[RMDB]
RNA sequence: GGGAACGACUCGAGUAGAGUCGAAAACAGCCACACCUUUAUUUUCCAGUUUGUCCAGAUGUUUUUUAUAACGCUCGAAUGUUUGAUUUACUCGAUUGUUCACAAAUUGAUAUUUAUGGAAAUCGACUAGGUAAUAGGGAUUCGUCCCUAUUACCUAAAAAGAAACAACAACAACAAC
Reactivity to 2A3 in 0.01 (KOAc 150mM, MgCl2 10mM, bicine 150mM(pH8.5), 24C), signal-to-noise 1, nucleotides 027 to 126: c010a010g070c020c010a050c010a030c020c000u020u160u090a070u070u110u090u000c020c010a000g040u050u090u070g020u110c040c010a010g020a190u020g050u130u030u000u000u160u000a130u040a080a010c040g000c010u000c010g070a130a040u070g020u050u050u080g040a060u000u050u060a010c010u000c030g020a000u010u080g020u050u000c020a010c000a040a080a040u040u010g050a030u060a150u230u210u060a080u070g050g050a010a070a070u120c030g070a070c030
Reactivity to DMS in 0.01 (KOAc 150mM, MgCl2 10mM, bicine 150mM(pH8.5), 24C), signal-to-noise 4, nucleotides 027 to 126: c060a090g000c030c040a050c090a070c040c030u000u010u010a090u010u000u000u000c040c020a120g010u000u000u000g010u000c020c040a090g010a060u000g010u000u000u010u000u010u010a060u010a090a090c090g020c050u000c070g010a080a080u000g010u000u020u000g010a110u000u000u000a040c090u000c010g010a020u000u000g000u000u000c000a020c010a040a040a060u000u010g000a100u000a080u000u000u000a070u010g000g000a040a060a040u000c030g010a090c250

This 177-nucleotide RNA was probed chemically with 2A3 and DMS. Values are in units of 0.01, from 0 to 300, in steps of 10. The data come from the RNA Mapping Database (RMDB), library OK2TST. The RNA was probed in 150 mM KOAc, 10 mM MgCl2 and 150 mM bicine (pH 8.5) at 24 C.